RNA sequence: GGGAACGACUCGAGUAGAGUCGAAAAGGGGUCUUCGAAAGCGUCACCACAGGCUUGGAUUUAUGUGUUUAUCACCUAUGGCUGAAGCCUCCACGGCCAUAGGUGAUAAACACAUUGUCAGCCUGUGCAAGUCGCUUUCAGAAGACGGAGGCACCCACACCUCUCUUGAGUUCGCUCAAGAGAGGUGAAAAGAAACAACAACAACAAC
Reactivity to 2A3 in 0.01 (KOAc 150mM, MgCl2 10mM, bicine 150mM(pH8.5), 24C), signal-to-noise 1, nucleotides 027 to 156: g120g000g000g020u030c000u000u010c000g010a000a000a000g010c010g010u030c020a040c110c000a030c000a000g010g030c000u170u240g240g070a180u180u160u100a020u030g010u000g000u000u000u000a000u000c000a000c010c010u010a000u000g000g000c010u000g020a070a000g000c000c000u000c000c010a030c010g000g000c010c020a000u000a000g000g000u000g000a000u010a000a000a000c000a000c000a000u010u000g000u010c040a000g000c010c000u010g010u000g000c000a300a190g010u000c000g000c000u010u000u000c010a010g000a000a000g000a000c000g000g000a000g030g000c010a060c000c000c000a030
Reactivity to DMS in 0.01 (KOAc 150mM, MgCl2 10mM, bicine 150mM(pH8.5), 24C), signal-to-noise 2, nucleotides 027 to 156: g010g070g020g010u010c000u000u010c010g000a030a000a020g040c030g020u000c040a170c130c000a010c000a020g000g020c020u010u010g070g020a180u010u010u000a020u000g040u000g010u000u000u000a010u000c000a020c000c000u000a000u010g010g000c000u000g010a060a110g000c010c010u000c010c020a300c000g000g000c000c010a010u000a020g010g020u000g000a010u010a000a000a010c010a010c010a000u000u010g040u000c040a090g000c010c000u000g020u010g020c040a030a130g020u000c010g010c000u000u000u000c010a090g030a020a010g010a030c010g010g000a050g070g030c020a130c060c020c020a300
Structure probing data (2A3 and DMS) for a 207-nucleotide construct. 2A3 adducts were read by reverse transcription with SuperScript II with manganese. Source: RMDB library RNAMAK, as collected in RNAgym. DMS adducts were read by reverse transcription with MarathonRT. The DMS profile rests on 5,611 reads. The reactions ran in a buffer of 150 mM KOAc, 10 mM MgCl2 and 150 mM bicine (pH 8.5), at 24 C.